Chemical mapping of a 177-nucleotide RNA with 2A3 and DMS. The RNA was probed in 150 mM KOAc, 10 mM MgCl2 and 150 mM bicine (pH 8.5) at 24 C. Values cover nucleotides 27 to 126. Source: RMDB libraries RFM100 and RFMREP, as collected in RNAgym.

[RMDB]
RNA sequence: GGGAACGACUCGAGUAGAGUCGAAAACCUAACUGUAACCUUGAUAGAUGGAAUGAGGGGGUAACGCCCUGAAACGUCUUCCCUGAUACUCCGAUUGGCGCUGCAAGACAGCACUUGCAGGGUCAAGGCAUUGUCAGUGUUUCGACACUGACAAUGCAAAAGAAACAACAACAACAAC
Reactivity to 2A3 in 0.01 (KOAc 150mM, MgCl2 10mM, bicine 150mM(pH8.5), 24C), signal-to-noise 5, nucleotides 027 to 126: c000c000u020a080a010c030u040g050u110a030a050c020c020u040u100g040a040u080a110g050a020u050g030g060a240a130u040g000a050g000g010g010g000g010u040a050a040c030g120c000c000c010u000g000a020a000a010c010g000u020c000u010u010c020c010c000u020g050a060u070a160c050u000c050c050g110a120u000u030g030g000c240g020c070u000g000c000a010a000g030a120c060a130g050c060a070c030u000u000g000c000a010g040g040g020u000c010a000a010g040
Reactivity to DMS in 0.01 (KOAc 150mM, MgCl2 10mM, bicine 150mM(pH8.5), 24C), signal-to-noise 2, nucleotides 027 to 126: c000c000u000a080a160c110u010g030u000a060a080c100c020u010u030g010a140u000a040g030a010u000g030g040a180a070u040g000a300g000g010g010g000g020u010a090a060c300g000c000c020c030u000g000a070a010a070c060g000u000c000u000u000c020c010c020u000g010a090u010a010c080u000c040c020g050a150u000u020g010g000c000g000c000u010g030c000a020a020g010a130c120a120g000c290a060c010u000u000g000c010a000g010g000g010u000c000a010a010g010